[RMDB]
RNA sequence: GGGAACGACUCGAGUAGAGUCGAAAAUGACGAGGCGCCGCAAGAGCGGCGUCGUCAGGUGGUGGUCGUAGCACGCGCGGAUGAGCGCCUCGAUCUGAUCGUCGGGUGACGUGGCCUGACCGCCGAUUAUUAGGGCGUCCACCAUAUCCAGCGCCGCGGUUACGAAAGAGUUCGCUCUUUCGUAACCAAAAGAAACAACAACAACAAC
Reactivity to 2A3 in 0.01 (KOAc 150mM, MgCl2 10mM, bicine 150mM(pH8.5), 24C), signal-to-noise 2, nucleotides 027 to 156: u110g010a020c030g010a050g090g020c050g000c000c020g000c170a270a070g080a100g090c010g000g000c000g000u000c000g000u000c000a030g060g040u030g000g000u010g000g010u010c020g010u040a040g030c030a060c170g010c040g000c020g130g090a290u100g090a110g070c020g000c020c000u070c070g120a200u060c050u060g010a030u030c030g080u020c000g070g030g080u080g050a060c030g020u030g050g000c010c000u020g030a090c000c010g000c020c010g010a010u020u060a060u070u220a080g020g100g000c000g010u020c000c000a000c000c010a040u050a050u120c020c020a030g000c040g000c150c060g040c020